An RNA of 177 nucleotides, treated with 2A3 and DMS and read out base by base. The 2A3 profile rests on 3,864 reads. The RNA was probed in 150 mM KOAc, 10 mM MgCl2 and 150 mM bicine (pH 8.5) at 24 C. Source: RMDB library OK1LIB, as collected in RNAgym. For 2A3 the reverse transcriptase was SuperScript II with manganese. For DMS, 4,800 sequencing reads were counted.
RNA sequence: GGGAACGACUCGAGUAGAGUCGAAAAUUUCAAAGAAGAAGGAUGUUCCGCCGGGAAGGAAGCGUACACUCUCAAAGGCACCGGUGGUUUCAAAAGUAUAUCUAGGCGCACCCGCGAGCAACGCUUCGAGGAUUUUAGGAUUCGUCCUAAAAUCCUCAAAAGAAACAACAACAACAAC
Reactivity to 2A3 in 0.01 (KOAc 150mM, MgCl2 10mM, bicine 150mM(pH8.5), 24C), signal-to-noise 4, nucleotides 027 to 126: u050u040u050c040a050a020a050g130a030a020g030a060a040g080g040a030u090g050u080u010c000c040g000c000c020g060g000g010a050a050g060g020a050a000g040c020g020u030a030c030a010c050u100c010u030c060a090a150a050g090g000c040a060c030c010g000g030u040g030g010u020u070u040c020a040a020a000a000g090u060a050u020a030u200c080u090a040g040g030c010g010c040a040c000c000c010g030c040g030a050g020c040a070a020c040g000c030u020u040c050
Reactivity to DMS in 0.01 (KOAc 150mM, MgCl2 10mM, bicine 150mM(pH8.5), 24C), signal-to-noise 3, nucleotides 027 to 126: u020u010u030c030a130a110a110g010a070a060g000a090a060g000g020a080u000g000u030u000c040c010g040c010c020g000g000g020a160a090g000g010a040a050g000c020g000u020a060c060a260c080u000c010u000c070a040a180a120g010g020c120a140c050c030g020g010u000g020g000u000u010u030c080a060a090a050a080g000u010a020u030a070u010c040u010a080g000g010c060g000c010a040c010c030c070g000c120g010a070g000c150a060a080c040g010c010u000u020c140